[RMDB]
Description: An RNA of 207 nucleotides, treated with 2A3 and DMS and read out base by base. For DMS, 6,711 sequencing reads were counted. Conditions: 150 mM KOAc, 10 mM MgCl2 and 150 mM bicine (pH 8.5), 24 C.
RNA sequence: GGGAACGACUCGAGUAGAGUCGAAAAUGGCAAGGCUGUGGAGAAAUAGGAAUGCUUUUACAUUGUUGGUGGGAAUGUAACUUGGUUCAACCAUUGUGGAAGACAGUGUGGCAAUUCUUCAAGGAUCUAGAACAAGAAACACCAUUUGACCCAACAAGUAAUUAAAUCGGUUCGCCGAUUUAAUUACAAAAGAAACAACAACAACAAC
Reactivity to 2A3 in 0.01 (KOAc 150mM, MgCl2 10mM, bicine 150mM(pH8.5), 24C), signal-to-noise 8, nucleotides 027 to 156: u050g010g000c040a040a040g040g000c030u040g030u070g070g040a070g050a040a100a050u140a050g020g030a050a020u060g020c000u050u040u040u040a060c060a070u060u070g030u040u020g010g020u030g020g020g040a040a020u050g020u060a030a040c050u040u060g040g000u120u060c040a040a030c020c020a080u030u080g040u060g050g050a040a020g050a020c040a060g020u030g000u040g090g000c010a030a090u070u020c020u060u050c050a040a030g020g010a050u030c020u110a050g040a060a020c030a030a020g030a050a090a010c030a010c040c010a020u050u020u070g030a050c020c020c000a010a030c030a100a040
Reactivity to DMS in 0.01 (KOAc 150mM, MgCl2 10mM, bicine 150mM(pH8.5), 24C), signal-to-noise 3, nucleotides 027 to 156: u000g010g040c030a080a110g010g020c030u000g010u000g000g010a100g010a040a090a120u010a090g020g020a060a100u000g000c010u000u000u000u010a070c030a090u000u000g010u010u000g000g020u000g030g030g000a080a070u010g010u000a070a090c080u010u000g000g030u000u000c040a070a080c060c020a080u020u000g030u000g020g020a090a090g020a070c030a060g030u010g040u010g030g020c040a050a170u000u000c030u000u000c040a050a100g030g010a060u000c030u000a110g000a080a080c040a030a080g000a090a080a120c020a070c030c020a080u000u000u010g010a300c040c000c020a020a070c140a140a270